Source: RMDB library M2PK50, as collected in RNAgym. This 177-nucleotide RNA was probed chemically with DMS and 2A3. Conditions: 150 mM KOAc, 10 mM MgCl2 and 150 mM bicine (pH 8.5), 24 C. The DMS profile rests on 13,551 reads. DMS adducts were read by reverse transcription with MarathonRT. The 2A3 profile rests on 11,619 reads.

[RMDB]
RNA sequence: GGGAACGACUCGAGUAGAGUCGAAAAGGUCCUCGCUUCGGCGAGGACCAGACCACCACUCCUGCGGGAGUUAAGGCCAAACGGACAGCCGGGUGCAAAGCCAAUUGUUUAAGUUCGCUUAAACAAAUCGUAGUAAUUAAUUCGUUAAUUACUACGAAAAAGAAACAACAACAACAAC
Reactivity to DMS in 0.01 (KOAc 150mM, MgCl2 10mM, bicine 150mM(pH8.5), 24C), signal-to-noise 8, nucleotides 027 to 126: g010g010u000c000c000u000c000g030c010u000u010c170g030g010c010g020a010g020g010a000c000c000a010g000a080c130c020a080c070c070a090c010u000c010c010u010g030c160g030g010g010a030g010u000u010a060a080g010g020c010c030a040a090a100c170g000g000a050c070a140g000c010c010g000g000g010u000g010c300a060a080a110g010c030c030a060a130u000u000g010u000u000u000a000a010g000u000u010c210g010c010u000u000a000a010a010c010a010a020a110
Reactivity to 2A3 in 0.01 (KOAc 150mM, MgCl2 10mM, bicine 150mM(pH8.5), 24C), signal-to-noise 4, nucleotides 027 to 126: g000g000u000c000c010u000c000g020c010u060u090c250g080g000c000g000a000g020g000a000c000c000a000g000a000c000c000a000c000c020a010c000u020c020c010u050g010c260g060g010g000a010g000u020u110a110a040g030g000c010c000a090a150a030c090g010g020a030c020a030g040c020c000g050g020g000u040g030c040a090a030a010g010c010c020a060a110u070u040g000u000u010u010a010a020g010u010u090c230g020c090u000u000a010a010a010c010a010a040a040